[RMDB]
Chemical mapping of a 177-nucleotide RNA with DMS and 2A3.
Reactivities are given for positions 27 through 126.
RNA sequence: GGGAACGACUCGAGUAGAGUCGAAAAUCCACACCCAUGUGUGUAGGAUUCCAAAUGAUCACCAUUAAAUUUGGUACAAAUUUUCAUAAAAGUUAUCACAUGGGUGUGGGACUUGACUUUUUUUAGAACUUCGCACAAAUUUCGAUUUGUGCGAAGUAAAAGAAACAACAACAACAAC
Reactivity to DMS in 0.01 (KOAc 150mM, MgCl2 10mM, bicine 150mM(pH8.5), 24C), signal-to-noise 1, nucleotides 027 to 126: u040c010c010a000c000a000c000c010c000a010u000g010u000g000u030g010u020a000g000g040a120u010u050c010c050a000a000a010u030g000a190u030c250a130c200c120a050u020u030a090a120a070u000u000u010g030g000u030a160c090a160a040a020u000u060u060u170c110a140u070a150a000a050a080g000u000u010a010u000c000a000c050a000u000g000g000g000u020g020u000g000g000g030a000c020u090u000g000a230c040u010u000u010u030u030u000u010a080g000a280
Reactivity to 2A3 in 0.01 (KOAc 150mM, MgCl2 10mM, bicine 150mM(pH8.5), 24C), signal-to-noise 3, nucleotides 027 to 126: u020c000c000a000c000a000c000c000c000a000u000g000u000g000u010g090u060a020g100g110a210u180u030c020c030a010a020a010u060g050a070u120c090a040c050c020a020u060u100a060a160a060u030u030u000g010g000u020a010c030a000a160a020u090u190u080u070c090a080u300a130a120a010a020g080u110u080a040u070c010a000c000a000u000g010g000g000u000g000u010g000g020g000a000c000u060u030g050a030c020u060u040u040u030u020u080u090a080g030a020
For 2A3, 1,388 sequencing reads were counted.